[RMDB]
RNA sequence: GGGAACGACUCGAGUAGAGUCGAAAAGGUCAACGGAGGCGCGAUAUUGGCUCCUUUGCAGGUGUACUGUUCCGGGAUCGGCGCACCGUCGGCGAAUGCCGGACUGCUGAUUGUCAGUACAUCGCCGCUAUCGCAGUGAAUUCGUUCACUGCGAUAGAAAAGAAACAACAACAACAAC
Reactivity to DMS in 0.01 (KOAc 150mM, MgCl2 10mM, bicine 150mM(pH8.5), 24C), signal-to-noise 6, nucleotides 027 to 126: g000g000u010c050a050a070c090g010g000a050g010g010c030g020c180g000a140u010a140u000u010g010g000c020u000c010c020u000u000u000g010c070a150g020g000u000g000u000a010c020u000g010u010u000c050c290g000g010g000a030u000c010g010g010c010g020c100a100c210c230g010u000c010g010g000c010g010a090a060u020g010c040c010g010g010a040c150u000g010c040u010g000a070u000u000g010u000c010a010g020u000a020c030a020u000c010g000c020c070g010
Reactivity to 2A3 in 0.01 (KOAc 150mM, MgCl2 10mM, bicine 150mM(pH8.5), 24C), signal-to-noise 6, nucleotides 027 to 126: g040g010u090c020a030a020c060g040g020a020g060g080c070g020c070g170a060u090a160u300u190g050g020c000u010c000c000u020u020u040g050c050a050g000g000u010g000u010a020c020u010g080u190u040c040c000g070g050g020a020u010c010g000g030c020g030c060a100c120c060g060u080c000g000g020c020g070a160a100u300g050c000c010g010g040a050c040u080g010c010u040g050a090u080u050g060u070c010a000g010u000a010c000a010u000c010g000c030c010g010

The record gives the reactivity of an RNA of 177 nucleotides to DMS and 2A3. It was measured as part of the RMDB library OK2TST. The reactions ran in a buffer of 150 mM KOAc, 10 mM MgCl2 and 150 mM bicine (pH 8.5), at 24 C. For 2A3 the reverse transcriptase was SuperScript II with manganese. The 2A3 profile rests on 9,126 reads. DMS adducts were read by reverse transcription with MarathonRT. Reactivities are given for positions 27 through 126.